[RMDB]
RNA sequence: GGGAACGACUCGAGUAGAGUCGAAAACUAUUUAGGCAUACUUCUCAGGAUGGCGCGUUGCAGUCCAACAAGAUCCAGGGACUGUACAGAAUUUUCCUAUACCUCGAGUCGGGUUUGGAAUCUAAGGUCUGGGUUAACUUUUCGAAGUUAACCCAGAAAAAGAAACAACAACAACAAC
Reactivity to DMS in 0.01 (KOAc 150mM, MgCl2 10mM, bicine 150mM(pH8.5), 24C), signal-to-noise 2, nucleotides 027 to 126: c040u010a050u020u010u030a040g000g000c040a060u010a130c040u010u000c090u000c100a190g000g000a090u000g030g000c010g000c110g030u050u010g050c000a010g000u010c020c000a050a120c130a120a110g010a060u030c070c070a130g000g000g010a000c000u010g010u040a040c070a150g020a010a100u010u020u000u020c000c000u000a030u020a110c160c040u000c040g000a000g000u000c010g000g000g010u010u020u010g020g000a070a060u000c050u010a090a040g000g000
Reactivity to 2A3 in 0.01 (KOAc 150mM, MgCl2 10mM, bicine 150mM(pH8.5), 24C), signal-to-noise 3, nucleotides 027 to 126: c060u050a120u190u120u120a110g040g000c020a000u000a100c010u050u050c050u000c050a010g050g020a070u030g100g020c030g010c060g060u020u050g000c010a000g000u010c010c000a050a040c050a050a180g060a170u060c040c030a000g030g010g010a000c010u020g010u030a010c000a030g120a100a080u060u070u000u000c020c000u060a060u050a150c030c050u000c010g010a010g020u010c010g000g000g000u030u010u040g020g020a070a050u000c020u030a080a090g140g020

This 177-nucleotide RNA was probed chemically with DMS and 2A3. DMS adducts were read by reverse transcription with MarathonRT.